Overview:
Conditions: 150 mM KOAc, 10 mM MgCl2 and 150 mM bicine (pH 8.5), 24 C. Chemical mapping of a 177-nucleotide RNA with 2A3 and DMS. 2A3 adducts were read by reverse transcription with SuperScript II with manganese. The DMS profile rests on 1,149 reads. Values cover nucleotides 27 to 126.
RNA sequence: GGGAACGACUCGAGUAGAGUCGAAAACCGAGGGGUGGAGCUAGGAUCACCGGGGAGACAUGGGGUCCGUGGGAUGCUUUUCCCACUCCGUCCAACCCCUCCCCCCGAGGGUCCCCCAGCGAAUGGCCGUGUCAAUAAACUUCGGUUUAUUGACACGAAAAGAAACAACAACAACAAC
Reactivity to 2A3 in 0.01 (KOAc 150mM, MgCl2 10mM, bicine 150mM(pH8.5), 24C), signal-to-noise 1, nucleotides 027 to 126: c010c000g000a010g000g060g030g000u150g000g030a060g070c040u030a070g060g040a030u030c030a070c220c040g000g010g010g050a120g000a010c090a150u150g000g010g000g000u010c000c080g000u010g010g010g010a010u060g120c130u150u190u150u090c010c000c000a000c020u000c000c040g040u000c000c010a030a110c010c000c020c020u000c000c000c000c000c000c000g010a050g020g000g010u000c010c010c010c000c010a030g060c040g120a120a080u110g120g060c040
Reactivity to DMS in 0.01 (KOAc 150mM, MgCl2 10mM, bicine 150mM(pH8.5), 24C), signal-to-noise 2, nucleotides 027 to 126: c040c000g020a180g000g000g000g020u020g030g010a100g020c120u020a080g000g010a020u000c030a090c030c030g040g000g030g030a070g010a170c220a100u010g030g000g010g010u010c090c110g020u000g020g010g010a040u000g000c210u020u020u000u010c000c030c000a100c020u000c060c050g000u000c090c100a140a090c050c040c000c000u000c010c010c010c010c000c020g020a180g010g010g000u000c010c010c040c050c120a070g010c130g010a110a120u010g010g030c130